[RMDB]
RNA sequence: GGGAACGACUCGAGUAGAGUCGAAAAGCUGUACGCUUCGGCGUACAGCAAAUAAAAUCAGCGGUUAAAAAGCAGGCGUUAUAACCGCUGAUCGCCUGCUUAAAAGUACUACCUUCGGGUAGUACAACUUACUAGCUACGUUCGCGUAGCUAGUAAGAAAAGAAACAACAACAACAAC
Reactivity to 2A3 in 0.01 (KOAc 150mM, MgCl2 10mM, bicine 150mM(pH8.5), 24C), signal-to-noise 3, nucleotides 027 to 126: g000c010u020g000u020a000c000g020c000u040u100c230g110g000c000g000u000a000c000a000g000c000a010a010a000u000a000a000a000a010u010c010a000g020c010g030g050u060u040a150a060a070a070a000g080c050a060g200g050c060g030u030u070a050u010a120a010c010c000g000c020u010g000a010u000c000g020c010c000u050g040c040u170u140a040a110a030a080g000u000a000c000u000a010c000c000u040u070c210g060g000g000u000a000g000u000a000c000a000a000
Reactivity to DMS in 0.01 (KOAc 150mM, MgCl2 10mM, bicine 150mM(pH8.5), 24C), signal-to-noise 2, nucleotides 027 to 126: g030c000u000g010u000a020c000g000c000u000u010c190g000g030c000g030u010a000c000a000g010c000a000a030a050u010a060a100a130a020u010c010a000g000c000g010g010u000u010a010a070a090a130a090g020c080a060g000g030c070g010u000u000a090u000a020a020c010c000g010c000u000g000a010u000c070g000c000c010u000g000c100u000u000a030a090a100a120g010u000a000c000u000a010c000c000u000u000c200g030g010g010u000a000g010u000a000c020a040a050